Description: This 207-nucleotide RNA was probed chemically with DMS and 2A3. High 2A3 reactivity points to a flexible backbone, as in loops and unpaired stretches. It was measured as part of the RMDB library OK3TST. The reactions ran in a buffer of 150 mM KOAc, 10 mM MgCl2 and 150 mM bicine (pH 8.5), at 24 C. Values cover nucleotides 27 to 156. For DMS, 2,218 sequencing reads were counted.

RNA sequence: GGGAACGACUCGAGUAGAGUCGAAAAGAAAAUCUAUCGACGUUACCGAUAACAUUACUUAUUUCAAAAUUACCGAAGAAAUGGGAAUGCCUUCCUGGGCGGAUUUAAAAAUCAAAGGAGAAUCGUUAGACCAUUUUCAUGCGGGUUUAGAAAUGGAACUAUAACAACCUUUCGAGGUUGUUAUAGUAAAAGAAACAACAACAACAAC
Reactivity to DMS in 0.01 (KOAc 150mM, MgCl2 10mM, bicine 150mM(pH8.5), 24C), signal-to-noise 1, nucleotides 027 to 156: g000a080a060a050a100u000c050u010a080u010c020g040a070c030g030u000u020a120c030c020g000a140u000a100a080c030a100u000u000a100c030u000u000a030u000u000u000c050a060a120a090a150u000u000a120c080c090g030a100a160g000a030a080a020u010g030g000g000a110a080u000g000c030c000u000u000c030c000u000g000g020g020c040g050g040a090u000u010u000a050a050a090a080a070u000c070a020a080a140g010g010a180g010a100a050u010c030g000u000u010a140g000a210c000c000a040u000u000u000u000c030a030u010g010c020g030g000g020u000u000u010a120g010a040a030a050u010g030g050a190
Reactivity to 2A3 in 0.01 (KOAc 150mM, MgCl2 10mM, bicine 150mM(pH8.5), 24C), signal-to-noise 2, nucleotides 027 to 156: g020a000a080a010a040u000c020u010a000u020c010g030a010c040g030u070u060a060c000c000g010a120u040a130a080c080a010u140u240a110c080u130u130a030u040u040u020c030a080a080a030a120u100u100a110c020c000g040a030a040g030a020a050a010u040g000g000g050a090a090u020g000c010c010u000u080c040c070u040g000g000g090c050g060g000a000u060u120u230a040a170a040a040a030u080c070a100a030a010g070g020a050g060a060a040u090c010g030u030u090a070g000a070c000c000a020u080u050u060u060c030a040u110g070c040g010g090g020u130u080u030a030g000a010a020a010u040g030g020a010